[RMDB]
This 177-nucleotide RNA was probed chemically with 2A3. Source: RMDB library RFM100, as collected in RNAgym. For 2A3 the reverse transcriptase was SuperScript II with manganese.
RNA sequence: GGGAACGACUCGAGUAGAGUCGAAAAUAUAGAUACAGGGAUUUGUCCCUGGCCUGUUGAAACUGUUCUUGAACAGUUUCCUGAUAUAAGGAUUGCCCACAUGGCACUCAGCGUUGAAGAAAAAGCUGACGUCAUGGUGAUUCGUCACCAUGACGUCAAAAGAAACAACAACAACAAC
Reactivity to 2A3 in 0.01 (KOAc 150mM, MgCl2 10mM, bicine 150mM(pH8.5), 24C), signal-to-noise 1, nucleotides 027 to 126: u210a000u010a000g210a060u100a080c010a000g000g000g000a030u120u230u180g150u010c000c000c040u000g000g030c000c000u050g000u000u150g040a000a000a000c000u050g000u060u000c090u180u180g130a000a000c000a000g000u010u000u000c080c000u100g000a090u040a000u010a130a010g080g000a010u060u140g050c000c130c000a230c000a060u240g010g000c040a060c040u050c000a000g000c010g090u000u170g040a190a030g080a010a090a060a000a000g090c080u000